[RMDB]
RNA sequence: GGGAACGACUCGAGUAGAGUCGAAAACGAUGUGAUCGAAAUCGCCAGGGGUUUAAAGAAAUCAGCGCGCGGGGAGUACGAGAUCACCGAGGUCAACCAGGUCUACCUCAAUCAGGGUAGGUUGGCGUGCUGAGAGGCUUUUCGAAGCCUCUCAGCAAAAAGAAACAACAACAACAAC
Reactivity to 2A3 in 0.01 (KOAc 150mM, MgCl2 10mM, bicine 150mM(pH8.5), 24C), signal-to-noise 1, nucleotides 027 to 126: c000g010a000u010g010u040g050a020u020c120g010a080a010a080u160c020g010c080c000a040g080g000g000g040u100u030u060a120a190a000g120a040a080a070u120c010a020g040c000g000c010g000c020g080g000g000g000a010g060u040a010c010g000a000g000a070u060c020a010c030c030g070a020g140g000u020c030a000a000c010c010a030g000g020u030c020u060a020c040c010u140c110a120a170u150c010a080g030g090g000u060a050g070g000u030u000g050g000c040g000
Reactivity to DMS in 0.01 (KOAc 150mM, MgCl2 10mM, bicine 150mM(pH8.5), 24C), signal-to-noise 1, nucleotides 027 to 126: c070g030a120u020g020u000g020a010u000c070g020a040a050a140u010c000g000c000c010a050g000g000g060g000u010u010u010a060a040a090g050a150a000a100u020c040a020g000c000g000c120g070c000g010g000g000g000a070g000u000a010c130g000a140g000a040u010c000a010c050c130g020a170g000g000u000c010a070a040c040c000a240g000g040u060c040u000a010c040c000u030c110a060a120u010c060a110g000g000g010u000a030g000g040u010u010g000g000c020g000